An RNA of 177 nucleotides, treated with DMS and 2A3 and read out base by base. 2A3 adducts were read by reverse transcription with SuperScript II with manganese. Source: RMDB library OK1LIB, as collected in RNAgym.

[RMDB]
RNA sequence: GGGAACGACUCGAGUAGAGUCGAAAAGACCUUUAAAGCGAGGACAAAAGACCAUACCGCUGAAUCAGGGUUAUUAUUGGUCAAUUUGGAGUAGGUCUCGUAAUAGUCAUCAGCGGAAUCCAGAGGACAUAUGGAUAGCCUUCGGGCUAUCCAUAUGAAAAGAAACAACAACAACAAC
Reactivity to DMS in 0.01 (KOAc 150mM, MgCl2 10mM, bicine 150mM(pH8.5), 24C), signal-to-noise 5, nucleotides 027 to 126: g000a130c000c010u020u010u020a040a090a150g010c080g000a070g010g030a090c030a060a060a170a160g000a060c010c020a070u030a160c010c000g020c010u000g000a070a120u040c170a120g000g000g000u020u020a070u020u020a100u010u010g020g000u000c030a050a060u000u010u010g000g000a050g010u000a140g000g000u010c000u000c040g020u010a040a060u010a060g000u010c070a060u020c030a020g000c000g000g010a120a090u000c020c020a060g010a080g020g010a190
Reactivity to 2A3 in 0.01 (KOAc 150mM, MgCl2 10mM, bicine 150mM(pH8.5), 24C), signal-to-noise 6, nucleotides 027 to 126: g040a020c010c000u040u090u150a130a070a030g070c050g010a030g040g040a020c020a010a090a000a010g030a010c010c000a020u080a050c010c010g040c050u010g020a030a040u190c060a090g000g000g120u080u090a090u070u040a030u050u080g030g010u000c020a070a110u090u050u120g110g030a110g030u130a060g010g090u030c000u010c010g010u020a060a040u020a120g090u060c030a020u010c010a110g020c000g000g020a010a020u030c050c010a020g020a050g100g070a030